Chemical mapping of a 207-nucleotide RNA with 2A3. For 2A3 the reverse transcriptase was SuperScript II with manganese. Reactivities are given for positions 27 through 156. For 2A3, 1,012 sequencing reads were counted.

RNA sequence: GGGAACGACUCGAGUAGAGUCGAAAAGUUGAGAGCGUUUAACUUAAGUCUUUGUUAUUAGCUUAAAAAAACUAUAUACAAGUGGUGGUAGUCCGCCACUCUAAGGGGACGCCUUUAGAAGAAGAGGGAAAGGCACUAAGCUUCGGCUUAGUGCCAACCAUGUUACCUGGUUCGCCAGGUAACAUGGAAAAGAAACAACAACAACAAC
Reactivity to 2A3 in 0.01 (KOAc 150mM, MgCl2 10mM, bicine 150mM(pH8.5), 24C), signal-to-noise 2, nucleotides 027 to 156: g060u090u090g020a050g020a040g090c090g000u060u100u130a100a050c040u100u060a120a090g060u110c070u070u090u030g000u020u040a090u050u050a060g020c010u050u100a110a100a030a010a000a000a010c060u080a080u000a020u030a100c010a070a020g010u010g040g000u000g010g010u070a100g080u090c050c010g000c000c000a020c000u000c000u010a020a020g000g010g010g060a020c050g140c000c020u060u060u080a020g020a080a010g030a040a010g020a070g040g050g020a020a110a120g000g000c000a000c000u000a000a000g010c020u010u130c300g020g000c010u000u010a000g000u010g000c000c000a000a000